The record gives the reactivity of an RNA of 207 nucleotides to DMS and 2A3. It was measured as part of the RMDB library M2RFPK. Values cover nucleotides 27 to 156. For 2A3 the reverse transcriptase was SuperScript II with manganese.
[RMDB]
RNA sequence: GGGAACGACUCGAGUAGAGUCGAAAAGUGGCGAAUGCCUGUGGAUCUACAUUUGUUGCGGGUUCGAGACCCGUCAGAGCCCGGCUCUGUAGCUCAAUGGUAGAGCGGUGUAUUCACAUAAACUUGUAAAAGACACGUGCCUUCGGGCACGUGUCAACAUCUUGAGGAUGUUCGCAUCCUCAAGAUGAAAAGAAACAACAACAACAAC
Reactivity to DMS in 0.01 (KOAc 150mM, MgCl2 10mM, bicine 150mM(pH8.5), 24C), signal-to-noise 1, nucleotides 027 to 156: g000u010g010g110c030g000a050a000u010g000c050c000u000g080u000g000g020a070u000c020u000a020c010a080u000u000u000g000u000u000g040c010g050g000g020u000u000c040g080a300g000a110c000c040c020g020u000c030a120g010a070g010c010c070c100g020g000c020u000c040u000g000u000a100g030c030u010c050a020a100u010g060g020u040a090g010a080g020c000g020g000u010g010u000a060u000u000c050a020c030a080u000a110a100a120c030u000u030g010u000a110a050a190a230g020a040c000a010c010g030u000g000c000c000u000u040c300g040g140g050c000a000c000g010u010g000u010c000a010a050
Reactivity to 2A3 in 0.01 (KOAc 150mM, MgCl2 10mM, bicine 150mM(pH8.5), 24C), signal-to-noise 2, nucleotides 027 to 156: g040u030g030g000c060g060a300a130u300g030c030c020u030g010u000g000g030a030u000c040u160a030c000a030u030u010u160g070u060u010g000c000g000g000g010u000u020c010g000a000g010a040c000c000c010g000u010c000a000g000a000g010c130c240c140g050g020c000u010c010u000g030u020a000g000c000u010c030a010a060u210g300g060u140a020g000a010g010c010g000g000u000g000u010a030u000u030c000a000c010a000u150a100a110a030c070u100u090g060u120a020a060a000a020g000a000c030a000c000g000u000g020c000c000u060u130c180g030g000g000c020a000c050g020u000g000u000c000a000a010